[RMDB]
RNA sequence: GGGAACGACUCGAGUAGAGUCGAAAACGACCGGCAAGGCGUUGGUGAUCGCCGAGGGUGUGCUGGUGGUGCAGCGCAUGCUGGCCUCACGGUUCACGCCGCUGGCGCUGUUCGGCACCGACCGCCGGGACUCUAAGUCCUUCGGGACUUAGAGUCCAAAAGAAACAACAACAACAAC
Reactivity to 2A3 in 0.01 (KOAc 150mM, MgCl2 10mM, bicine 150mM(pH8.5), 24C), signal-to-noise 1, nucleotides 027 to 126: c000g060a060c000c000g050g060c050a070a070g090g000c030g030u010u040g050g100u090g020a100u160c050g010c000c000g050a060g020g080g070u080g020u080g010c000u020g010g010u030g000g000u110g100c030a020g000c040g010c120a100u300g010c010u020g000g000c000c000u140c040a120c080g020g000u100u100c050a030c120g090c040c010g000c060u010g000g030c010g000c000u040g220u100u000c030g000g000c010a000c000c000g110a020c000c050g000c000c000g020
Reactivity to DMS in 0.01 (KOAc 150mM, MgCl2 10mM, bicine 150mM(pH8.5), 24C), signal-to-noise 2, nucleotides 027 to 126: c100g000a260c030c000g000g000c100a220a170g000g060c100g000u000u000g010g000u000g010a180u000c120g040c000c000g040a070g000g000g040u010g030u000g010c000u000g000g030u000g020g030u000g050c010a030g000c000g010c300a100u020g030c010u010g010g000c010c030u010c090a170c110g030g000u010u010c160a120c100g000c010c000g000c050u010g010g010c010g030c070u000g000u020u000c100g020g010c000a040c000c020g040a080c090c080g010c080c020g020
Structure probing data (2A3 and DMS) for a 177-nucleotide construct. Source: RMDB library OK2TRN, as collected in RNAgym. The RNA was probed in 150 mM KOAc, 10 mM MgCl2 and 150 mM bicine (pH 8.5) at 24 C. The 2A3 profile rests on 1,342 reads.